[RMDB]
RNA sequence: GGGAACGACUCGAGUAGAGUCGAAAACUUGGGCACUUCGGUGCCCAAGAAACGCUCAACCUCAGAGCGCAAAAGUCGAACGAAUACAGAUCGACAUGAGGAAAACGGACCCGUUCGCGGGUCCGAACGUUAACUAAAUGUUCGCAUUUAGUUAACGAAAAGAAACAACAACAACAAC
Reactivity to DMS in 0.01 (KOAc 150mM, MgCl2 10mM, bicine 150mM(pH8.5), 24C), signal-to-noise 1, nucleotides 027 to 126: c000u000u000g010g010g010c010a000c000u000u010c190g030g020u000g010c000c000c000a010a000g000a090a090a190c010g010c000u000c000a070a110c030c000u010c010a010g010a010g010c010g010c100a070a090a020a000g040u000c000g010a010a110c050g000a170a110u010a150c190a120g000a090u000c010g010a010c000a020u000g000a020g000g000a120a060a120a160c010g000g010a010c000c000c000g040u000u020c170g020c010g010g000g010u000c010c000g000a010a040
Reactivity to 2A3 in 0.01 (KOAc 150mM, MgCl2 10mM, bicine 150mM(pH8.5), 24C), signal-to-noise 5, nucleotides 027 to 126: c000u000u000g010g000g010c010a000c010u030u030c260g110g000u000g010c000c000c010a010a000g000a000a000a000c000g000c000u010c020a110a080c000c000u000c000a000g000a000g000c000g000c090a300a250a020a020g010u010c000g000a020a030c020g030a120a060u300a230c100a090g060a090u010c000g000a000c000a000u010g000a000g000g010a030a030a020a010c010g000g000a000c000c040c000g020u040u050c240g000c020g110g000g000u010c000c000g000a000a000
Structure probing data (DMS and 2A3) for a 177-nucleotide construct. For 2A3 the reverse transcriptase was SuperScript II with manganese. The RNA was probed in 150 mM KOAc, 10 mM MgCl2 and 150 mM bicine (pH 8.5) at 24 C. The 2A3 profile rests on 11,827 reads. DMS adducts were read by reverse transcription with MarathonRT. It was measured as part of the RMDB library M2PK50.